[RMDB]
RNA sequence: GGGAACGACUCGAGUAGAGUCGAAAAGAUAUGGAAGGUAAGGGAGCGACUAUUCGGAAACGAAUACUCGCGAGGAUCUUACUUCCUAAGUCAAAGUGGUCACUGUACUUCGGUACAGUGACCACAAUCACGCUAAAGAGUUCGCUCUUUAGCGUGAAAAAGAAACAACAACAACAAC
Reactivity to DMS in 0.01 (KOAc 150mM, MgCl2 10mM, bicine 150mM(pH8.5), 24C), signal-to-noise 2, nucleotides 027 to 126: g000a000u000a020u010g000g000a000a010g010g000u020a010a010g000g000g010a010g030c000g000a000c220u000a020u000u010c000g030g000a020a000a010c000g020a010a010u000a000c130u000c000g030c020g000a100g020g000a060u000c000u000u000a010c000u000u000c000c000u000a010a080g000u000c000a090a120a130g010u000g000g000u010c000a020c000u000g010u000a010c000u000u010c230g010g010u000a010c000a000g000u010g000a000c000c010a000c000a010a050
An RNA of 177 nucleotides, treated with DMS and read out base by base. The RNA was probed in 150 mM KOAc, 10 mM MgCl2 and 150 mM bicine (pH 8.5) at 24 C. The DMS profile rests on 2,933 reads.